[RMDB]
RNA sequence: GGGAACGACUCGAGUAGAGUCGAAAACGUGCCGGAACGCCACUGGCUGGACGUGCCGUUCGCGGAGAAGGACGAGGCCAAGGCGCUGGGAGCGCGUUGGGACCCGCGCGAGAAGCGCUGGUACGCGCCCGGUGGGCGGGUGUCCGCGCUGCGGCGCGCAUAGGAGUCGGUUCGCCGACUCCUAUGCAAAAGAAACAACAACAACAAC
Reactivity to 2A3 in 0.01 (KOAc 150mM, MgCl2 10mM, bicine 150mM(pH8.5), 24C), signal-to-noise 2, nucleotides 027 to 156: c020g010u020g020c010c010g060g080a140a100c010g030c010c010a150c220u050g000g000c050u080g040g080a080c020g010u080g120c000c020g110u100u080c120g000c050g120g240a060g050a090a090g060g000a010c000g000a030g010g000c010c000a030a110g040g000c020g000c020u010g090g080g080a200g080c000g000c010g020u000u020g030g010g040a090c010c010c000g000c000g000c000g000a140g010a090a010g010c000g020c000u000g000g000u020a040c090g020c000g010c210c020c010g240g180u270g050g000g020c010g030g110g010u010g020u000c010c000g000c000g000c000u050g030c060g020g010c000g000c010
Description
The data come from the RNA Mapping Database (RMDB), library OK3TST. Chemical mapping of a 207-nucleotide RNA with 2A3. Values cover nucleotides 27 to 156. High 2A3 reactivity points to a flexible backbone, as in loops and unpaired stretches. 2A3 adducts were read by reverse transcription with SuperScript II with manganese. The reactions ran in a buffer of 150 mM KOAc, 10 mM MgCl2 and 150 mM bicine (pH 8.5), at 24 C.